[RMDB]
RNA sequence: GGGAACGACUCGAGUAGAGUCGAAAACCGGCGACACGCUGGCUCAGAUGAGGUCUCCGGGGCCGACUCUCGGUACGCCACGGGAGCCGCCCGAACGCAUGCAAAGCGGUGGGCCUUCCCAGGGGGCUUUUGGCACAUGCUACCGCCGACUGCGGUGUCAUAUAAAUAGGUUCGCCUAUUUAUAUGAAAAAGAAACAACAACAACAAC
Reactivity to DMS in 0.01 (KOAc 150mM, MgCl2 10mM, bicine 150mM(pH8.5), 24C), signal-to-noise 2, nucleotides 027 to 156: c010c020g030g030c030g040a120c030a050c050g030c050u000g050g010c050u010c020a140g020a120u000g000a140g050g010u000c020u000c020c090g040g010g020g040c100c030g010a100c060u000c010u020c000g010g020u000a080c110g010c000c040a110c070g020g000g000a050g020c010c030g000c010c000c010g000a070a060c040g030c030a090u020g020c140a100a140a120g000c050g020g010u000g010g010g010c020c060u000u000c030c020c040a190g020g030g050g020g010c090u000u020u010u000g000g010c030a090c080a130u010g020c040u000a030c010c000g040c010c040g020a130c110u000g010c010g040g000u010g010
Reactivity to 2A3 in 0.01 (KOAc 150mM, MgCl2 10mM, bicine 150mM(pH8.5), 24C), signal-to-noise 4, nucleotides 027 to 156: c000c000g010g030c030g030a050c020a030c100g050c060u040g220g000c070u100c130a100g050a300u100g040a130g050g050u010c010u010c030c030g050g010g020g000c050c010g030a050c000u010c000u010c030g000g030u070a030c080g030c040c020a040c050g010g000g000a010g030c040c040g030c000c020c000g050a170a030c010g020c030a020u280g020c080a100a080a080g010c020g000g030u070g010g030g000c000c010u060u010c000c000c010a040g010g010g010g010g000c000u060u050u070u050g050g000c050a030c020a130u190g020c020u070a010c000c020g000c010c040g160a100c070u140g010c020g010g000u020g000
An RNA of 207 nucleotides, treated with DMS and 2A3 and read out base by base. 2A3 is a SHAPE reagent: it acylates the 2'-hydroxyl of flexible nucleotides of all four kinds. Source: RMDB library ARCHII, as collected in RNAgym. Reactivities are given for positions 27 through 156.